The data come from the RNA Mapping Database (RMDB), library OK3TST. Structure probing data (2A3) for a 207-nucleotide construct. Values cover nucleotides 27 to 156. The reactions ran in a buffer of 150 mM KOAc, 10 mM MgCl2 and 150 mM bicine (pH 8.5), at 24 C. For 2A3, 771 sequencing reads were counted.

RNA sequence: GGGAACGACUCGAGUAGAGUCGAAAAGCAUUAUUGACAUUAUUUUACAUUAGUAUUACACUUGUCCUUCUAGACGCUCAAAGCAGUUUACAAAAUUUCAUGUAAAAGUAGGCACCAACUGUCUUGGUAAAAUUAAAUUCCAUUGCCAUUAUGUAUACGCCAUUAUUUACUUCGGUAAAUAAUGGCGAAAAGAAACAACAACAACAAC
Reactivity to 2A3 in 0.01 (KOAc 150mM, MgCl2 10mM, bicine 150mM(pH8.5), 24C), signal-to-noise 2, nucleotides 027 to 156: g030c030a040u050u050a070u130u070g060a040c020a030u030u110a100u130u210u060u070a040c010a030u070u050a150g130u210a100u090u110a030c040a040c100u050u160g020u050c000c000u010u000c020u010a040g010a090c030g010c020u060c100a040a030a000g010c020a000g000u100u070u000a080c080a040a150a120a040u050u150u090c030a020u100g030u110a000a000a000a060g060u060a080g050g000c050a040c000c010a010a090c040u130g030u100c000u020u050g020g020u050a000a000a090a130u040u210a020a070a060u080u010c040c020a020u010u050g050c020c050a010u100u090a050u250g170u100a040u110a070